[RMDB]
RNA sequence: GGGAACGACUCGAGUAGAGUCGAAAAGCUGUGUUCGGCCGACGACGACCUGCUGCUGGUCUCGGCCAACGGGCAGUCCAUCAGGUUCUCGGCGACCGACGAGGCGCUGCGGCCAAUGGGUCGUGCCCUAUUGCUGAGCUUUCGAGCUCAGCAAUAGAAAAGAAACAACAACAACAAC
Reactivity to DMS in 0.01 (KOAc 150mM, MgCl2 10mM, bicine 150mM(pH8.5), 24C), signal-to-noise 4, nucleotides 027 to 126: g020c010u000g020u030g000u040u000c050g010g020c000c000g000a030c080g010a040c150g010a030c030c020u010g020c150u000g000c040u010g000g010u020c000u000c090g020g010c100c100a060a030c080g000g000g010c000a040g020u010c120c060a020u000c110a070g000g010u000u020c220u020c000g000g010c000g000a100c000c000g010a040c120g000a250g000g000c030g000c050u010g000c060g010g030c010c010a140a090u010g000g000g010u020c010g000u010g000c000c000
Reactivity to 2A3 in 0.01 (KOAc 150mM, MgCl2 10mM, bicine 150mM(pH8.5), 24C), signal-to-noise 9, nucleotides 027 to 126: g010c020u050g040u030g070u300u060c030g000g000c010c000g000a030c030g010a010c050g030a030c020c010u040g050c050u060g020c040u070g050g120u060c040u020c030g070g010c050c010a030a030c000g000g020g000c010a010g020u050c050c010a070u130c030a040g020g000u210u100c020u010c010g000g010c020g080a180c010c000g010a050c040g020a070g020g010c050g020c040u080g020c000g000g000c000c020a020a110u140g010g000g010u040c020g050u040g020c000c000
The record gives the reactivity of an RNA of 177 nucleotides to DMS and 2A3. DMS adducts were read by reverse transcription with MarathonRT. For 2A3 the reverse transcriptase was SuperScript II with manganese. The DMS profile rests on 8,661 reads. The 2A3 profile rests on 12,368 reads. Conditions: 150 mM KOAc, 10 mM MgCl2 and 150 mM bicine (pH 8.5), 24 C. Values cover nucleotides 27 to 126.